[RMDB]
RNA sequence: GGGAACGACUCGAGUAGAGUCGAAAAGGGCCAUUUUUAAUGACCACCAUCUUAAUAGACCUGGUGUCUAUUGUGGCUCUGAUUUUAUUGACAUUGUCAGGCGGUUAGCAGUAUCACUGUUCCAGCCGGUAAUGUCAACCUUCGGGUUGACAUUACCAAAAGAAACAACAACAACAAC
Reactivity to DMS in 0.01 (KOAc 150mM, MgCl2 10mM, bicine 150mM(pH8.5), 24C), signal-to-noise 2, nucleotides 027 to 126: g010g010g000c000c010a000u000u020u000u000u010a050a130u000g000a020c040c030a030c030c000a130u010c080u000u020a100a070u000a030g010a010c050c120u000g000g010u000g010u000c000u000a030u000u000g000u000g000g010c010u000c010u010g000a150u000u010u000u000a080u020u000g000a010c050a040u000u000g010u000c010a160g010g000c030g010g000u000u000a040g010c010a010g010u010a090u000c100a070c030u000g010u000u000c040c030a090g020c160c080
Reactivity to 2A3 in 0.01 (KOAc 150mM, MgCl2 10mM, bicine 150mM(pH8.5), 24C), signal-to-noise 1, nucleotides 027 to 126: g040g000g000c030c000a010u110u080u010u070u090a060a060u060g000a010c010c020a030c010c000a000u010c030u120u270a250a160u080a190g000a000c000c080u040g030g010u010g020u000c010u020a030u000u050g020u010g000g000c000u010c000u010g000a010u000u070u040u100a080u040u080g030a010c040a060u070u070g020u070c040a030g000g000c030g010g010u060u060a000g040c010a010g010u100a050u230c090a040c060u030g000u010u000c000c000a000g020c000c000

The record gives the reactivity of an RNA of 177 nucleotides to DMS and 2A3. The data come from the RNA Mapping Database (RMDB), library 15KREP. For 2A3 the reverse transcriptase was SuperScript II with manganese.